[RMDB]
Source information: Structure probing data (DMS and 2A3) for a 177-nucleotide construct. The RNA was probed in 150 mM KOAc, 10 mM MgCl2 and 150 mM bicine (pH 8.5) at 24 C. For DMS the reverse transcriptase was MarathonRT.
RNA sequence: GGGAACGACUCGAGUAGAGUCGAAAAAAACGGGCGUGAUGAGAAAGGGCAGACAGCCCGGUGAGAAACGGUAGUAGAUGUGAAAUGCCAAUACGGCUUGCUUUCAUCAUAUCUUGGCCCAGUUGAGGCUAUCCCAAGAAUUCGUUCUUGGGAUAGCAAAAGAAACAACAACAACAAC
Reactivity to DMS in 0.01 (KOAc 150mM, MgCl2 10mM, bicine 150mM(pH8.5), 24C), signal-to-noise 4, nucleotides 027 to 126: a090a050a030c050g000g000g000c080g030u000g020a060u000g010a060g020a090a090a120g020g010g030c000a090g020a110c260a180g010c010c000c010g000g010u010g030a080g000a050a040a110c080g010g010u000a040g030u010a060g010a060u000g010u000g000a070a050a080u000g020c010c040a070a090u010a080c180g000g010c010u000u000g010c140u000u000u000c020a020u010c020a030u010a050u010c090u000u000g000g000c010c000c000a110g000u010u010g000a160g010
Reactivity to 2A3 in 0.01 (KOAc 150mM, MgCl2 10mM, bicine 150mM(pH8.5), 24C), signal-to-noise 2, nucleotides 027 to 126: a030a010a000c030g000g000g000c030g010u040g000a070u040g010a050g070a140a120a060g010g000g020c010a000g100a270c010a020g000c000c010c030g010g000u020g020a020g030a070a150a000c050g020g020u010a030g050u010a030g060a110u120g040u040g140a120a120a020u090g000c020c030a020a000u180a080c110g000g020c000u030u050g010c000u000u060u030c030a040u020c000a000u060a030u080c050u060u120g050g000c000c010c000a030g070u060u070g060a070g000